Source: RMDB library OK3TST, as collected in RNAgym.
An RNA of 207 nucleotides, treated with 2A3 and DMS and read out base by base.
Values cover nucleotides 27 to 156.
For 2A3 the reverse transcriptase was SuperScript II with manganese.
For DMS, 2,280 sequencing reads were counted.
RNA sequence: GGGAACGACUCGAGUAGAGUCGAAAACUACUAUGUGCUGGGGCUUGGAGAUACCACAGUGGCAGAAACAAUGUCCCCACCUUGGUGGAGCUUCCAUUCUAGCAGGGAAGACUGGCACUAACACACAGACAAGAUAAUUUCAGAUGGUGGCAGGUGAUAUAAAUCGAGCAUUCGUGCUCGAUUUAUAAAAAGAAACAACAACAACAAC
Reactivity to 2A3 in 0.01 (KOAc 150mM, MgCl2 10mM, bicine 150mM(pH8.5), 24C), signal-to-noise 4, nucleotides 027 to 156: c030u100a030c030u050a020u130g040u030g020c040u020g010g010g000g030c030u050u040g020g030a090g010a060u080a060c030c020a040c060a090g020u110g040g020c050a020g140a070a080a020c060a120a100u110g120u150c020c010c010c010a030c000c010u060u050g060g000u020g020g050a030g020c020u090u000c020c000a080u120u080c040u080a030g060c040a040g060g000g030a040a020g040a090c020u000g020g050c000a000c060u100a150a000c050a000c010a010c030a060g090a120c030a140a000g040a070u060a140a140u130u170u100c030a040g050a090u060g020g040u020g030g000c040a020g010g060u030g070a010
Reactivity to DMS in 0.01 (KOAc 150mM, MgCl2 10mM, bicine 150mM(pH8.5), 24C), signal-to-noise 1, nucleotides 027 to 156: c050u000a060c020u010a070u010g000u000g040c070u010g030g020g040g060c020u000u000g010g040a160g020a120u000a040c000c070a040c090a090g010u010g070g000c010a060g000a140a080a130c080a070a060u000g020u000c020c000c000c010a120c070c040u000u000g020g010u010g010g020a080g010c060u020u000c030c020a150u000u010c050u000a170g000c110a120g000g000g000a030a090g070a070c020u000g010g000c020a030c060u000a060a170c040a060c070a090c010a080g010a160c080a140a090g020a130u000a050a080u000u020u000c110a120g020a150u000g000g050u020g000g040c030a020g010g010u010g000a160